[RMDB]
RNA sequence: GGGAACGACUCGAGUAGAGUCGAAAAUCAUGAGCUUCGGCUCAUGAAAAAAACCGUAGGAAAUGUUGACUAUCAACGUGUCACUUCGAAAGAGGUGGACACGUGACCACGGUCACCAUUUCCUAAACGGAAAAAGUGCCUUCUUCGGAAGGCACAAGGAUUUUAUGUACUUCGGUACAUAAAAUCCAAAAGAAACAACAACAACAAC
Reactivity to 2A3 in 0.01 (KOAc 150mM, MgCl2 10mM, bicine 150mM(pH8.5), 24C), signal-to-noise 2, nucleotides 027 to 156: u040c000a000u000g000a020g010c040u060u090c300g090g000c000u030c000a000u000g000a000a030a000a000a000a000a020c010c000g000u030a020g000g000a010a000a000u000g000u010u020g010a010c010u050a030u250c100a140a050c010g000u000g010u000c000a000c010u000u000c020g070a100a080a060g000a000g000g040u080g090g080a020c000a000c000g000u000g000a000c010c020a130c240g000g000u000c000a000c000c000a000u010u000u010c000c000u000a010a020a000c000g000g050a070a060a000a110a050g000u000g010c000c000u000u010c000u020u070c160g120g000a000a000g000g000c000a000c010a000a000
Reactivity to DMS in 0.01 (KOAc 150mM, MgCl2 10mM, bicine 150mM(pH8.5), 24C), signal-to-noise 1, nucleotides 027 to 156: u000c000a020u010g010a030g030c010u000u030c300g040g020c000u000c000a000u000g010a000a000a100a120a130a080a140c010c000g000u000a060g000g000a020a000a010u000g020u010u000g010a000c000u000a090u010c040a090a020c010g030u000g030u000c000a050c000u000u000c000g010a210a090a300g010a030g000g030u040g000g010a030c020a010c020g000u000g000a070c210c080a030c150g050g000u010c010a010c040c000a010u000u000u000c000c000u010a000a020a040c030g000g000a030a060a030a050a180g010u000g000c000c010u000u000c000u000u000c300g040g000a030a030g010g040c010a000c000a020a190